[RMDB]
RNA sequence: GGGAACGACUCGAGUAGAGUCGAAAAACAACGAGCUGUAAACCCUCAUACAAUGUUUAUGAUAUCAGGACCAUUAGCUGAACUUCAAUUAGCCUUUCAGGAUUUAGAUUUACCUGAAGGUCCAUUGAAUCGCGUGUAGAUUCGUCUACACGCGAUUAAAAGAAACAACAACAACAAC
Reactivity to DMS in 0.01 (KOAc 150mM, MgCl2 10mM, bicine 150mM(pH8.5), 24C), signal-to-noise 2, nucleotides 027 to 126: a050c070a070a130c160g020a040g010c020u010g020u000a070a160a120c040c000c010u030c040a030u000a040c120a130a110u020g010u010u000u000a020u000g010a090u000a090u000c150a090g000g000a090c060c030a120u000u000a070g010c050u020g030a100a070c140u000u000c130a020a050u010u010a130g030c010c020u000u000u000c050a010g000g000a200u010u000u000a110g000a190u010u010u010a130c010c000u000g020a040a030g000g000u020c100c080a080u000u000g020
Reactivity to 2A3 in 0.01 (KOAc 150mM, MgCl2 10mM, bicine 150mM(pH8.5), 24C), signal-to-noise 1, nucleotides 027 to 126: a000c050a020a020c080g120a000g000c040u050g030u090a080a080a070c020c020c000u080c010a030u070a080c020a000a300u140g050u020u250u060a070u050g060a030u020a000u180c040a040g000g020a010c040c070a070u060u070a010g040c000u030g020a050a140c020u090u000c000a000a120u040u020a060g010c020c010u040u140u020c000a000g000g060a070u090u050u050a160g040a230u030u230u160a070c000c000u010g000a020a020g030g020u000c000c020a060u100u030g020
An RNA of 177 nucleotides, treated with DMS and 2A3 and read out base by base. DMS adducts were read by reverse transcription with MarathonRT. For DMS, 971 sequencing reads were counted.